Conditions: 150 mM KOAc, 10 mM MgCl2 and 150 mM bicine (pH 8.5), 24 C.
An RNA of 207 nucleotides, treated with 2A3 and read out base by base.
2A3 is a SHAPE reagent: it acylates the 2'-hydroxyl of flexible nucleotides of all four kinds.
For 2A3 the reverse transcriptase was SuperScript II with manganese.
RNA sequence: GGGAACGACUCGAGUAGAGUCGAAAAGUGCGAUGAAGAAUAUGGGACCGGAAACCAGCAAUGCCUUUGUUCGUACGCUGGGGAAAGUUAACCGCUUCCUGGCAACGGUGAACACGUCGUAUAACCCGGAAUUCCUGGUCAGUAACUUCAUCCGUGAGACUAUGGCAGUGUUCGCACUGCCAUAGUCAAAAGAAACAACAACAACAAC
Reactivity to 2A3 in 0.01 (KOAc 150mM, MgCl2 10mM, bicine 150mM(pH8.5), 24C), signal-to-noise 1, nucleotides 027 to 156: g130u130g000c040g010a000u030g000a020a160g070a070a180u140a050u110g070g110g000a010c000c080g010g040a040a010a040c000c000a010g030c080a000a140u200g040c030c000u300u050u110g120u200u040c000g000u010a000c160g010c000u020g000g050g010g080a000a130a000g120u180u050a000a110c000c100g000c020u020u000c000c000u010g020g000c010a050a000c060g060g060u100g020a020a000c120a010c180g140u050c000g000u060a000u110a300a030c040c000c000g030g000a030a110u150u000c000c000u010g070g040u000c000a000g080u000a070a090c000u100u130c000a000u020c010c010g100u020g030a070